[RMDB]
RNA sequence: GGGAACGACUCGAGUAGAGUCGAAAAGGGGAACAGGUGAUGUUUGGUUACAUGAAUAAGCUCUUUAGUAGUGAUUUCUGAGGUUUUGGCGCACCCAUCACCCAAGCAGUGUACACCGUGCCCAAUGUCAACUGUUCAAUUUCGAUUGAACAGUUGAAAAAGAAACAACAACAACAAC
Reactivity to DMS in 0.01 (KOAc 150mM, MgCl2 10mM, bicine 150mM(pH8.5), 24C), signal-to-noise 8, nucleotides 027 to 126: g000g000g010g010a100a070c100a110g010g020u000g020a070u000g010u000u010u000g010g000u000u000a130c120a070u000g010a040a020u000a150a300g010c010u000c020u000u010u000a070g030u020a030g010u010g000a170u010u000u000c010u000g000a140g010g010u000u000u010u010g010g020c110g010c120a100c090c020c010a040u000c070a050c180c010c030a050a060g010c060a050g000u000g010u010a120c060a050c030c020g010u010g010c010c010c030a080a070u000g010
Reactivity to 2A3 in 0.01 (KOAc 150mM, MgCl2 10mM, bicine 150mM(pH8.5), 24C), signal-to-noise 5, nucleotides 027 to 126: g080g000g010g030a070a060c070a090g020g030u010g040a080u020g070u020u120u060g040g000u060u100a060c020a090u140g020a020a020u100a110a010g010c010u000c000u130u300u170a120g060u080a010g010u060g060a060u040u020u020c020u030g040a090g040g070u030u050u100u120g060g010c090g010c030a060c000c000c000a020u010c010a010c010c010c000a030a010g020c030a030g030u030g020u190a040c040a020c030c030g040u090g010c000c000c000a020a040u120g040